Chemical mapping of a 177-nucleotide RNA with 2A3 and DMS. Source: RMDB library OK2TRN, as collected in RNAgym. The reactions ran in a buffer of 150 mM KOAc, 10 mM MgCl2 and 150 mM bicine (pH 8.5), at 24 C.
RNA sequence: GGGAACGACUCGAGUAGAGUCGAAAAAUAACAAUUGCGUUUGAAGUGAUAACAUCAAGGUUAGCAAUUUUAAACAAAAUGAGUUAUCAAGAUAACAGAUGUUAAAAGUGAGGAGAAUAUAAAUGAAGGUCAUUACCAUAUUCGUAUGGUAAUGACCAAAAGAAACAACAACAACAAC
Reactivity to 2A3 in 0.01 (KOAc 150mM, MgCl2 10mM, bicine 150mM(pH8.5), 24C), signal-to-noise 2, nucleotides 027 to 126: a000u040a030a010c000a020a120u030u040g040c030g000u030u010u060g000a050a020g000u000g020a030u000a010a040c020a040u070c050a000a050g210g030u040u020a030g030c040a010a040u070u070u090u120a050a060a000c020a020a100a060a060u070g010a110g070u000u000a020u060c030a050a040g030a010u060a000a000c000a000g140a190u000g070u100u120a030a050a060a070g150u180g030a070g050g100a100g010a130a050u110a020u020a290a080a090u140g130a070a030
Reactivity to DMS in 0.01 (KOAc 150mM, MgCl2 10mM, bicine 150mM(pH8.5), 24C), signal-to-noise 2, nucleotides 027 to 126: a010u000a000a030c040a190a060u000u010g020c300g070u000u000u020g010a070a060g050u000g000a060u000a010a000c000a090u000c190a100a100g000g030u010u000a040g010c090a040a110u000u000u000u000a020a000a040c060a020a150a030a050u000g000a150g000u000u000a020u000c030a040a040g000a070u000a000a020c060a110g000a060u000g010u000u000a040a040a020a060g000u000g000a040g000g000a030g000a060a090u010a040u000a040a080a070u010g010a130a030